The data come from the RNA Mapping Database (RMDB), library OK2TRN. Structure probing data (DMS and 2A3) for a 177-nucleotide construct. High DMS reactivity at an A or C suggests that its Watson-Crick edge is free. The reactions ran in a buffer of 150 mM KOAc, 10 mM MgCl2 and 150 mM bicine (pH 8.5), at 24 C. For 2A3, 6,444 sequencing reads were counted. Reactivities are given for positions 27 through 126.
RNA sequence: GGGAACGACUCGAGUAGAGUCGAAAACGCCUGAAUGUGCCUAUCGUCUGUACUGUCAUUGGCGAAGGCGGCUCUGGCGGUGCUUUGGCAAUCGGUGUAGGCGAUAAAGUGAAUAUGCUGCAAUACACGUACUUAUUCGUUUCGACGAAUAAGUACGAAAAGAAACAACAACAACAAC
Reactivity to DMS in 0.01 (KOAc 150mM, MgCl2 10mM, bicine 150mM(pH8.5), 24C), signal-to-noise 3, nucleotides 027 to 126: c220g010c020c000u010g000a070a070u000g010u010g010c030c060u000a060u000c000g000u000c000u000g010u010a030c080u000g000u010c140a050u000u010g010g010c020g010a020a020g000g030c000g000g010c000u010c170u010g010g030c010g020g040u010g000c020u000u000u020g010g000c010a030a030u010c030g000g020u000g010u000a020g010g000c010g010a040u000a030a090a090g000u000g000a100a100u000a080u010g010c060u000g000c070a060a090u010a080c160a140
Reactivity to 2A3 in 0.01 (KOAc 150mM, MgCl2 10mM, bicine 150mM(pH8.5), 24C), signal-to-noise 4, nucleotides 027 to 126: c050g070c010c000u070g120a150a070u200g030u110g080c010c010u070a100u050c020g000u020c010u010g050u050a050c020u030g130u180c060a040u040u050g070g030c020g000a010a000g050g000c060g040g000c040u070c120u210g140g000c060g040g010u080g090c000u030u080u010g040g090c020a010a020u060c030g030g010u000g000u000a020g000g000c000g000a010u040a070a060a000g070u080g060a050a050u160a060u210g040c030u010g000c030a050a030u080a170c070a000